Record summary:
Chemical mapping of a 207-nucleotide RNA with 2A3 and DMS.

RNA sequence: GGGAACGACUCGAGUAGAGUCGAAAAAUGGGGUUCGCCCCAUGGACAGCGUACUACUCUUGGACAUGAUCCGAGGUCUCCCCACCAUGUCCCAAAUAGGACAUGAGGACUCCGGAUCAACAGCCAAGAGUAUCGCAUUUGGCUCAUUCGUGAGCAAGGAAAUUAUAGUAUUCGUACUAUAAUUUCCAAAAGAAACAACAACAACAAC
Reactivity to 2A3 in 0.01 (KOAc 150mM, MgCl2 10mM, bicine 150mM(pH8.5), 24C), signal-to-noise 3, nucleotides 027 to 156: a000u020g000g010g000g040u110u070c190g180c010c000c000c010a000u030g030g090a060c130a100g030c030g060u160a120c050u000a000c010u000c000u020u000g020g010a070c020a170u080g000a000u000c000c000g020a040g000g020u000c050u080c010c070c020c000a030c000c000a000u000g010u000c000c030c000a180a300a070u240a160g000g000a000c000a000u000g020a020g000g020a000c000u000c040c000g000g000a010u010c000a020a010c040a030g040c000c000a010a000g000a010g010u000a000u020c000g000c000a020u090u080u200g090g000c000u000c000a020u090u050c110g140u050g040a000g010c050a060a080
Reactivity to DMS in 0.01 (KOAc 150mM, MgCl2 10mM, bicine 150mM(pH8.5), 24C), signal-to-noise 2, nucleotides 027 to 156: a110u000g000g000g070g000u000u000c250g010c000c000c000c000a020u010g010g040a120c060a140g000c030g000u000a100c120u000a030c000u000c010u020u020g000g000a110c050a300u000g000a050u000c000c000g030a040g040g000u000c000u000c300c100c050c040a300c150c000a020u000g000u010c000c000c010a120a200a220u000a060g020g010a010c020a020u000g000a300g040g010a040c010u000c000c010g000g010a030u000c000a030a120c030a180g010c000c010a000a030g000a060g010u000a010u010c050g020c020a210u000u000u000g000g010c010u000c000a040u000u000c280g020u010g000a040g010c010a100a200
The RNA was probed in 150 mM KOAc, 10 mM MgCl2 and 150 mM bicine (pH 8.5) at 24 C.
For DMS, 3,008 sequencing reads were counted.